Structure probing data (2A3 and DMS) for a 207-nucleotide construct. 2A3 adducts were read by reverse transcription with SuperScript II with manganese. DMS adducts were read by reverse transcription with MarathonRT. Conditions: 150 mM KOAc, 10 mM MgCl2 and 150 mM bicine (pH 8.5), 24 C.
[RMDB]
RNA sequence: GGGAACGACUCGAGUAGAGUCGAAAAUAAGCGUGUCGGAGGGUUGUCUUCGUCAUCAACACACACAGUUUAUAAUAACUGGCAAAUCAAACAAUAAUUUCGCAGUAGCUGCCUAAUCGCACUCUGCAUCGCCUAACAGCAUUUCCUAUAUGCUGUUCUAUCCGUAUAGGUUCGCCUAUACGGAUAGAAAAGAAACAACAACAACAAC
Reactivity to 2A3 in 0.01 (KOAc 150mM, MgCl2 10mM, bicine 150mM(pH8.5), 24C), signal-to-noise 6, nucleotides 027 to 156: u160a030a010g050c050g020u050g050u090c010g030g010a000g020g040g000u220u000g020u070c010u010u020c010g110u010c020a000u030c010a020a050c020a000c000a000c000a010c010a070g010u010u060u060a300u070a220a090u160a070a000c020u020g050g000c040a050a050a090u130c050a070a060a160c080a040a120u210a150a130u080u230u190c100g000c010a020g010u250a010g050c150u010g000c010c020u100a090a050u150c050g000c000a010c010u010c010u010g000c010a030u090c050g030c010c050u070a040a030c000a000g010c000a000u040u050u090c030c040u110a090u020a010u190g000c000u000g010u020u010
Reactivity to DMS in 0.01 (KOAc 150mM, MgCl2 10mM, bicine 150mM(pH8.5), 24C), signal-to-noise 1, nucleotides 027 to 156: u000a030a140g020c060g040u000g000u010c010g000g000a070g030g020g020u000u030g000u000c040u000u000c140g000u010c040a040u000c140a050a030c010a090c020a080c060a110c040a010g030u000u010u000a110u000a160a090u010a040a030c010u020g020g010c050a070a050a040u000c040a080a080a120c030a060a120u020a060a200u000u000u020c040g000c030a080g000u000a010g040c080u000g020c000c030u000a130a090u000c080g010c030a060c040u010c000u000g020c030a190u000c070g030c090c050u020a050a050c000a020g020c010a040u000u000u000c150c000u000a130u000a070u000g010c010u000g010u000u000